An RNA of 177 nucleotides, treated with 2A3 and DMS and read out base by base. Values cover nucleotides 27 to 126. The RNA was probed in 150 mM KOAc, 10 mM MgCl2 and 150 mM bicine (pH 8.5) at 24 C. For 2A3 the reverse transcriptase was SuperScript II with manganese. The 2A3 profile rests on 57,583 reads.

RNA sequence: GGGAACGACUCGAGUAGAGUCGAAAACGCUACGGGGAACAACUUUGCUGACAUCGGGACGCCAGCCCAUCGCCAGCGCGGUAUCGGUGAUGUAGCGUUCCAGAUUACCGAUAGAGACUGCGCCCGAAUGGCGUAUAUAUUUCGAUAUAUACGCCAUAAAAGAAACAACAACAACAAC
Reactivity to 2A3 in 0.01 (KOAc 150mM, MgCl2 10mM, bicine 150mM(pH8.5), 24C), signal-to-noise 9, nucleotides 027 to 126: c020g000c020u040a020c020g010g010g020g080a080a030c040a040a040c110u130u140u170g020c020u050g030a030c010a090u060c040g010g010g050a050c030g040c080c020a030g010c010c020c010a040u050c030g020c020c020a040g010c020g000c020g060g010u030a020u040c010g000g020u020g010a040u070g040u080a020g030c010g010u030u000c010c000a020g010a070u020u030a020c000c000g020a020u020a040g140a000g030a060c020u030g000c000g010c000c000c000g040a050
Reactivity to DMS in 0.01 (KOAc 150mM, MgCl2 10mM, bicine 150mM(pH8.5), 24C), signal-to-noise 9, nucleotides 027 to 126: c060g000c010u000a030c030g010g000g000g010a170a100c180a070a080c120u010u020u010g010c020u010g000a070c090a090u020c050g000g000g000a070c050g010c060c060a070g000c030c040c020a060u010c060g010c010c060a090g010c060g000c040g010g010u000a020u010c020g000g000u000g010a030u010g010u010a060g010c020g010u000u000c010c020a130g010a050u000u000a030c010c010g010a030u000a050g010a150g010a120c030u000g000c050g000c000c030c010g010a070